[RMDB]
RNA sequence: GGGAACGACUCGAGUAGAGUCGAAAAGAAAAUACAAGGCUGACAAAACCCUGUCCCAACCUCCACGUGGUGUCGGCUGGAUAAUGCUGCAUUAUGUUGGAUUUAUCAACUGGGAAGGGCAAAAAAACGUAAGUAGCAAGUUCGCUUGCUACUUACGAAAAGAAACAACAACAACAAC
Reactivity to 2A3 in 0.01 (KOAc 150mM, MgCl2 10mM, bicine 150mM(pH8.5), 24C), signal-to-noise 1, nucleotides 027 to 126: g010a010a010a010a010u090a020c020a040a110g120g000c060u050g130a030c040a030a130a040a080c010c010c000u030g300u050c020c000c000a040a070c020c010u010c010c020a030c030g010u030g000g040u050g090u170c020g010g000c000u050g020g020a130u210a300a040u200g000c010u010g000c010a000u010u010a010u060g150u160u040g040g000a000u000u050u070a230u090c010a050a050c050u010g010g010g020a030a000g030g000g010c000a090a110a010a000a010a000a000
Reactivity to DMS in 0.01 (KOAc 150mM, MgCl2 10mM, bicine 150mM(pH8.5), 24C), signal-to-noise 2, nucleotides 027 to 126: g000a100a070a120a030u000a100c060a100a060g000g000c050u010g010a130c130a040a140a140a160c020c010c010u000g040u020c000c000c010a040a080c080c080u030c000c000a030c030g030u000g020g030u000g000u020c040g020g010c000u000g000g030a100u000a110a030u010g020c010u010g000c000a010u000u010a020u000g000u030u010g010g020a080u010u000u010a100u010c130a080a070c110u000g030g010g020a180a040g030g000g000c070a010a000a080a100a020a050a020